[RMDB]
RNA sequence: GGGAACGACUCGAGUAGAGUCGAAAAGCAACCCCAAGCGUCUUGGCGCAGGGAGGGAUCCCCGUCAGCCAGGUCCCCACGCAGCUCCAGGCAGCGCCAGCGUCCACCAGGGAGCAGGGGCAGCAGAUGAAUAGGGUAGUUUCGACUACCCUAUUCAAAAAGAAACAACAACAACAAC
Reactivity to DMS in 0.01 (KOAc 150mM, MgCl2 10mM, bicine 150mM(pH8.5), 24C), signal-to-noise 6, nucleotides 027 to 126: g000c110a130a170c060c000c000c060a110a160g010c050g020u010c020u010u010g010g020c030g020c030a050g010g000g000a050g010g030g010a180u010c000c000c000c040g010u000c080a140g000c010c030a050g000g010u010c020c000c000c050a130c130g010c080a120g010c020u000c020c020a120g000g010c070a080g020c070g000c050c030a050g020c030g010u000c050c040a100c080c070a110g010g000g000a070g020c020a110g000g000g000g000c100a080g020c070a070g000a170
Reactivity to 2A3 in 0.01 (KOAc 150mM, MgCl2 10mM, bicine 150mM(pH8.5), 24C), signal-to-noise 2, nucleotides 027 to 126: g010c020a030a130c000c000c010c000a060a040g010c000g060u010c020u060u080g020g000c010g000c030a020g030g030g020a100g050g060g020a050u020c010c000c000c000g110u110c060a030g010c020c010a010g030g040u080c010c000c000c000a070c030g070c040a020g000c010u000c020c000a010g000g050c010a020g040c040g020c020c020a030g000c010g010u010c010c030a080c010c010a030g010g060g040a020g000c020a030g010g030g000g000c010a020g000c020a020g060a200